Structure probing data (DMS and 2A3) for a 177-nucleotide construct. For DMS, 2,076 sequencing reads were counted. For 2A3, 2,775 sequencing reads were counted.

[RMDB]
RNA sequence: GGGAACGACUCGAGUAGAGUCGAAAAGGCCUAAUUGAAGAUGCGUACCAAGCUGCGUUUCAACCUGCAUGGGUUGAGGCGGCUUAGCGGAUUAAGGCGUUCUGCCCUAGUGGUCCAUUACCCUAUGCGGUACCACUAUGUUCGCAUAGUGGUACCGAAAAGAAACAACAACAACAAC
Reactivity to DMS in 0.01 (KOAc 150mM, MgCl2 10mM, bicine 150mM(pH8.5), 24C), signal-to-noise 2, nucleotides 027 to 126: g040g010c040c010u000a070a130u010u010g000a130a130g000a090u010g000c030g010u000a120c170c080a010a000g020c000u000g030c010g020u030u010u020c000a000a010c000c020u000g020c300a070u020g010g010g010u000u000g000a010g000g010c020g000g000c000u000u000a040g010c030g010g010a040u010u000a070a050g020g000c000g010u000u010c090u000g010c040c040c030u010a050g000u000g000g000u010c020c060a110u010u010a140c010c020c010u000a110u010g010
Reactivity to 2A3 in 0.01 (KOAc 150mM, MgCl2 10mM, bicine 150mM(pH8.5), 24C), signal-to-noise 3, nucleotides 027 to 126: g050g000c000c000u070a140a140u070u160g110a140a080g050a050u100g100c020g040u050a070c060c040a030a010g010c020u040g010c040g050u050u030u050c010a020a000c010c000u120g110c200a190u300g040g000g000u000u010g000a000g010g000c010g030g000c000u000u010a000g010c000g000g030a000u060u070a100a060g020g000c050g020u120u010c060u110g040c000c020c010u040a060g060u050g100g000u000c010c020a040u090u150a080c040c000c010u040a110u150g110

Source: RMDB library VIROID, as collected in RNAgym.